[RMDB]
RNA sequence: GGGAACGACUCGAGUAGAGUCGAAAAGACAAAAUGGAUAUAAAUGAAAAUUACCAUGUUGUAAAACCUUGAAAAUCAGAUUCUAACUGGAUUUGUAUGCAACUAAGUAUUUUUCUGAACACCUAUGCAGGUCUUAUUUACAGUAGUUACUAAGGGAGAUUACGUAAAAUUUCGAUUUUACGUAAUCAAAAGAAACAACAACAACAAC
Reactivity to DMS in 0.01 (KOAc 150mM, MgCl2 10mM, bicine 150mM(pH8.5), 24C), signal-to-noise 1, nucleotides 027 to 156: g010a200c050a040a150a080a060u000g000g000a090u020a080u000a140a090a260u020g000a030a030a070a060u000u000a030c000c010a090u000g030u000u000g000u010a070a080a130a100c040c120u000u000g010a050a150a090a140u000c010a110g000a150u000u000c070u010a020a150c210u020g000g010a040u000u010u000g020u000a130u010g010c000a000a010c020u020a070a050g020u000a030u000u000u000u000u000c030u000g000a150a080c060a050c020c030u010a030u000g040c140a120g040g000u000c010u020u000a090u000u000u000a060c030a100g010u000a090g010u000u010a040c060u010a030a020g000g000g030a260
Reactivity to 2A3 in 0.01 (KOAc 150mM, MgCl2 10mM, bicine 150mM(pH8.5), 24C), signal-to-noise 1, nucleotides 027 to 156: g010a020c020a020a110a030a090u160g020g030a080u130a010u060a300a130a090u190g020a000a040a000a000u030u000a020c020c000a000u060g030u020u000g030u010a130a200a150a170c050c000u070u140g100a080a090a040a020u040c000a000g050a100u170u050c050u150a030a160c070u070g080g000a050u020u020u010g020u070a020u110g000c020a020a020c000u030a010a010g000u000a010u040u020u030u000u020c020u050g020a040a010c030a040c050c000u060a050u120g030c010a000g020g020u020c010u040u040a090u060u180u040a040c050a020g060u180a000g010u060u010a040c020u060a060a040g100g010g020a160

This 207-nucleotide RNA was probed chemically with DMS and 2A3. Values cover nucleotides 27 to 156. Conditions: 150 mM KOAc, 10 mM MgCl2 and 150 mM bicine (pH 8.5), 24 C.